[RMDB]
RNA sequence: GGGAACGACUCGAGUAGAGUCGAAAAUAACCUAUGGGGGUGCAGAAGCUACAGCAUGUGAUACCACCAAAUAUAUGCUGUCCUAGUUUUGACUCAACACAAACAUGGCAAUCUUAGGUGGAGAUAACAUGGUUUAGGUAUUCGUACCUAAACCAUGAAAAGAAACAACAACAACAAC
Reactivity to DMS in 0.01 (KOAc 150mM, MgCl2 10mM, bicine 150mM(pH8.5), 24C), signal-to-noise 9, nucleotides 027 to 126: u010a110a160c030c020u000a070u000g010g010g010g020g020u000g010c060a070g010a090a070g010c060u000a040c020a020g010c020a020u000g010u000g020a220u010a110c040c020a040c030c030a070a080a100u010a040u000a030u000g010c010u010g000u000c130c090u000a120g010u010u000u000u010g010a080c090u000c120a060a080c160a050c120a030a040a070c060a090u000g000g010c090a080a040u010c060u010u000a080g010g020u000g000g010a140g010a100u000a050a190
Reactivity to 2A3 in 0.01 (KOAc 150mM, MgCl2 10mM, bicine 150mM(pH8.5), 24C), signal-to-noise 5, nucleotides 027 to 126: u030a010a030c000c010u020a080u080g060g010g000g010g000u030g010c020a010g020a140a020g020c020u030a010c010a010g000c010a020u030g020u040g040a030u070a170c010c020a010c000c010a000a100a000u150a010u010a010u030g010c010u020g000u030c000c050u080a090g010u010u010u030u060g040a050c010u020c130a080a060c040a030c020a090a090a020c020a060u070g050g000c030a040a080u040c060u050u100a060g010g010u020g030g010a030g020a020u140a060a020